Chemical mapping of a 207-nucleotide RNA with 2A3 and DMS. It was measured as part of the RMDB library RNAMAK. The DMS profile rests on 2,713 reads. The reactions ran in a buffer of 150 mM KOAc, 10 mM MgCl2 and 150 mM bicine (pH 8.5), at 24 C. The 2A3 profile rests on 2,602 reads.

RNA sequence: GGGAACGACUCGAGUAGAGUCGAAAAGCGAGUGUUUCGACACUCGCAAAAAUCCUAAGUCCCAACGAUAAUUCCAGUUCUGAUGACCUGUCGGAAACGACAGCAAGGAACGGUGCCAGUUGGGAUAUGGAAAAAAAGUCCCGAUUCGUCGGGACAACAAGAAGGUGUGAUUCGUCACACCUUCUUGAAAAGAAACAACAACAACAAC
Reactivity to 2A3 in 0.01 (KOAc 150mM, MgCl2 10mM, bicine 150mM(pH8.5), 24C), signal-to-noise 2, nucleotides 027 to 156: g000c000g010a000g020u010g040u110u130u040c050g050a010c000a000c000u000c000g000c000a000a000a000a000a000u010c030c000u050a130a010g040u000c000c010c000a010a000c030g070a090u110a260a090u280u090c030c030a100g010u010u000c010u030g170a260u060g050a140c030c000u010g000u000c000g030g030a090a050a050c010g010a010c020a010g000c000a110a110g000g000a000a000c000g000g000u040g070c160c090a030g000u000u010g000g000g000a000u000a040u020g020g040a020a130a000a000a000a020a020g010u000c000c000c030g000a010u010u030c160g020u000c000g000g000g000a000c000a000a020
Reactivity to DMS in 0.01 (KOAc 150mM, MgCl2 10mM, bicine 150mM(pH8.5), 24C), signal-to-noise 1, nucleotides 027 to 156: g040c010g020a030g020u000g040u010u000u000c160g000a210c050a040c000u000c000g040c000a000a000a000a050a090u000c000c000u000a100a220g000u000c020c010c010a020a020c000g000a220u000a120a270u000u000c040c020a180g030u020u000c000u010g020a140u010g000a040c300c030u010g010u000c020g000g010a110a110a170c000g010a010c000a000g000c020a050a090g010g000a030a020c010g000g030u000g010c130c090a110g000u000u000g000g040g000a000u010a100u010g010g000a000a000a040a050a080a140a270g010u010c000c010c000g020a070u010u000c300g020u000c020g030g000g000a010c030a000a040